Conditions: 150 mM KOAc, 10 mM MgCl2 and 150 mM bicine (pH 8.5), 24 C.
Structure probing data (DMS and 2A3) for a 207-nucleotide construct.
For DMS the reverse transcriptase was MarathonRT.
For 2A3, 1,645 sequencing reads were counted.
The data come from the RNA Mapping Database (RMDB), library OK3TST.
RNA sequence: GGGAACGACUCGAGUAGAGUCGAAAAACGUCGCCUGCUCCUGGUGGGCCACAAGCUGGUGGGCGGUACGCUGGCCGUCAACACGCUGUCCACCAUCACUACGGAGGCGGAUGCCAUCACCAAGCUGGGCGAAGGCUCCAUGCUGCUGGCAAUGUGGUGUAAUCAAAGGGUUCGCCCUUUGAUUACAAAAAGAAACAACAACAACAAC
Reactivity to DMS in 0.01 (KOAc 150mM, MgCl2 10mM, bicine 150mM(pH8.5), 24C), signal-to-noise 2, nucleotides 027 to 156: a070c000g000u000c020g020c000c010u000g020c010u010c040c040u030g070g000u000g020g000g020c050c080a110c120a110a050g040c010u000g020g010u000g000g030g010c010g030g020u010a040c190g010c150u000g020g000c010c030g000u000c040a030a070c030a130c030g020c010u000g030u000c010c000a030c000c020a050u000c050a050c050u000a100c050g010g000a200g030g030c000g010g000a130u000g010c010c010a090u010c040a060c010c020a080a200g030c060u000g040g010g000c010g000a100a080g010g020c000u000c020c020a130u010g040c020u000g030c020u010g000g010c080a080a180u010g010u000g000g010
Reactivity to 2A3 in 0.01 (KOAc 150mM, MgCl2 10mM, bicine 150mM(pH8.5), 24C), signal-to-noise 3, nucleotides 027 to 156: a000c020g000u020c000g040c010c000u050g040c040u080c020c030u010g000g010u000g010g020g010c030c010a120c050a060a040g030c010u110g010g050u030g030g000g000c060g020g000u120a130c170g070c110u100g130g000c020c000g030u030c020a060a020c010a040c080g010c000u010g010u020c010c000a010c020c000a050u140c030a000c090u180a100c050g070g000a020g000g020c000g020g000a040u080g000c020c000a050u070c060a020c130c030a010a010g050c030u060g030g020g010c070g050a080a050g130g000c070u060c020c000a030u160g000c010u020g050c010u010g020g010c020a020a050u090g000u020g060g030